[RMDB]
RNA sequence: GGGAACGACUCGAGUAGAGUCGAAAAGAGCAGACAGCACCCACAGGUCAGGGGGCAGACAUCGAGGCUGAUCAGGGGGGAGAGGCUGCAGAUAGUCAAAGGGAAGAGGCCAUAGCUGACCAGCGGGCAAAGUCUUACGUUUCGACGUAAGACUUUGAAAAGAAACAACAACAACAAC
Reactivity to DMS in 0.01 (KOAc 150mM, MgCl2 10mM, bicine 150mM(pH8.5), 24C), signal-to-noise 5, nucleotides 027 to 126: g000a100g010c040a040g010a070c110a090g010c070a200c010c010c010a080c120a080g010g010u000c050a060g000g000g010g010g020c060a070g000a050c060a060u000c050g010a190g020g000c050u000g000a120u010c060a130g010g000g000g000g010g000a060g000a180g010g010c030u010g010c070a140g010a060u000a060g010u010c050a050a070a120g000g000g010a090a080g000a110g000g000c030c030a040u010a110g010c020u010g010a070c040c020a070g010c050g010g010g000
Reactivity to 2A3 in 0.01 (KOAc 150mM, MgCl2 10mM, bicine 150mM(pH8.5), 24C), signal-to-noise 2, nucleotides 027 to 126: g010a010g020c050a000g110a190c040a040g000c010a060c000c010c000a030c050a060g020g020u020c010a000g000g020g000g030g070c030a020g020a030c010a030u050c040g030a040g000g030c010u020g020a050u100c130a150g000g030g000g000g000g000a050g020a000g020g000c020u020g000c030a020g020a040u050a040g040u080c060a030a060a020g080g040g000a070a040g050a040g070g000c000c010a110u160a070g010c000u000g010a030c020c010a010g000c060g000g000g000